An RNA of 177 nucleotides, treated with 2A3 and read out base by base. The 2A3 profile rests on 494 reads.

RNA sequence: GGGAACGACUCGAGUAGAGUCGAAAACAGCGGUUGGUGCUUCUGGAGCCACUUAAAUUAGUUCCCUGCGUGAAGAGGAUUUCAUGCGUGAUUACAGUCACCCAGGAGCUCCUUCAGCGACCUCCGGCCGUCGGGGUAUGUUCGCAUACCCCGACGGAAAAGAAACAACAACAACAAC
Reactivity to 2A3 in 0.01 (KOAc 150mM, MgCl2 10mM, bicine 150mM(pH8.5), 24C), signal-to-noise 1, nucleotides 027 to 126: c010a000g060c050g010g000u000u010g020g010u010g000c010u000u000c000u000g020g030a050g070c100c000a060c000u120u080a090a120a130u170u100a050g000u010u050c000c010c020u020g000c000g030u050g020a030a000g110a130g300g120a200u000u100u000c040a010u000g050c030g080u060g000a100u240u270a080c110a070g060u010c010a010c020c000c000a000g000g000a000g000c000u030c000c000u000u000c010a000g010c010g040a080c020c020u030c030c050g040g040
The data come from the RNA Mapping Database (RMDB), library OK1LIB. Values cover nucleotides 27 to 126.